An RNA of 207 nucleotides, treated with DMS and 2A3 and read out base by base.
For 2A3, 2,049 sequencing reads were counted.
The reactions ran in a buffer of 150 mM KOAc, 10 mM MgCl2 and 150 mM bicine (pH 8.5), at 24 C.
[RMDB]
RNA sequence: GGGAACGACUCGAGUAGAGUCGAAAACAACACGUCCUCGUCGUACAGAGUGGUAACAUGUGUCACCACAUAUCCAAGCUUGGGUACACGGGCAUGACCCAACCCCUUGGGCGGAUGGUGGCACAUGAAAAGAAGUAACACUUCGGUGUUACUUCAAGAUGGUUAACAGCUUCGGCUGUUAACCAUCAAAAGAAACAACAACAACAAC
Reactivity to DMS in 0.01 (KOAc 150mM, MgCl2 10mM, bicine 150mM(pH8.5), 24C), signal-to-noise 1, nucleotides 027 to 156: c060a070a090c060a070c050g030u040c020c010u000c000g030u010c050g100u020a140c070a120g000a200g000u010g010g020u020a150a250c010a060u040g040u000g010u000c010a000c000c010a020c020a120u000a060u000c020c000a020a150g030c080u000u010g010g010g150u000a030c070a030c070g020g010g000c030a110u010g000a160c000c040c000a070a040c060c010c020c020u000u000g020g020g060c080g000g000a060u000g010g030u000g010g000c020a010c000a020u010g000a010a040a050a200g000a010a010g010u000a010a000c000a000c000u000u050c300g050g000u010g010u010u010a000c010u000u000c020a030a100
Reactivity to 2A3 in 0.01 (KOAc 150mM, MgCl2 10mM, bicine 150mM(pH8.5), 24C), signal-to-noise 3, nucleotides 027 to 156: c040a000a020c030a020c070g110u080c000c000u060c000g120u040c040g050u140a060c090a060g090a040g080u120g090g100u170a120a030c000a010u000g000u000g010u020c000a000c030c000a080c070a200u270a030u070c000c010a000a010g040c030u030u020g010g010g010u010a030c010a010c040g000g000g000c070a140u300g180a300c000c000c000a000a000c000c010c000c000u010u000g000g000g000c010g000g000a040u020g000g010u000g000g000c000a000c000a000u010g000a000a010a000a000g010a000a000g000u000a000a000c000a000c000u020u070c180g030g000u000g000u000u000a010c000u000u000c010a000a010